[RMDB]
RNA sequence: GGGAACGACUCGAGUAGAGUCGAAAAGGUACUUUCGAGUACCAAAAAAGCGUACUACUCUGGAGUGGAAGCAUGGGCACAAACCAUCCCAAAUAGGAUGGUUUAGCCCAUGAACUACUUCGCCAGAGUAUCGCAAAAAGUCCACUUCGGUGGACAAGAUUCAAAUAACCUUCGGGUUAUUUGAAUCAAAAGAAACAACAACAACAAC
Reactivity to 2A3 in 0.01 (KOAc 150mM, MgCl2 10mM, bicine 150mM(pH8.5), 24C), signal-to-noise 2, nucleotides 027 to 156: g000g000u010a000c010u080u110u180c210g030a050g010u000a010c010c000a150a100a000a000a000a020g060c080g020u120a070c080u000a000c000u010c000u020g000g020a050g050u120g180g000a020a000g000c000a000u000g000g010g000c020a050c110a290a000a000c020c000a020u040c030c020c000a190a300a110u300a110g000g000a000u010g010g000u010u000u010a000g000c000c010c000a000u000g000a000a010c010u050a030c000u010u060c030g000c030c000a020g000a000g000u000a010u010c000g000c000a160a000a000a000a000g000u010c000c000a000c000u020u090c260g080g000u000g000g000a000c010a000a050
Reactivity to DMS in 0.01 (KOAc 150mM, MgCl2 10mM, bicine 150mM(pH8.5), 24C), signal-to-noise 2, nucleotides 027 to 156: g000g000u020a010c000u010u010u000c210g050a060g030u010a030c000c020a000a010a040a160a100a120g050c040g030u000a090c170u000a010c000u010c000u010g000g010a030g030u000g020g010a160a200g020c000a020u010g020g020g010c010a130c150a020a020a010c000c000a000u000c010c000c000a040a150a250u000a050g000g000a040u000g020g020u010u010u000a040g010c020c000c020a000u000g010a080a070c030u000a180c000u000u000c000g000c000c010a010g000a050g010u000a000u010c000g080c030a080a020a120a120a140g010u000c010c000a040c020u000u010c300g040g020u000g020g020a020c000a010a040
An RNA of 207 nucleotides, treated with 2A3 and DMS and read out base by base. For DMS the reverse transcriptase was MarathonRT. The DMS profile rests on 3,143 reads. 2A3 adducts were read by reverse transcription with SuperScript II with manganese.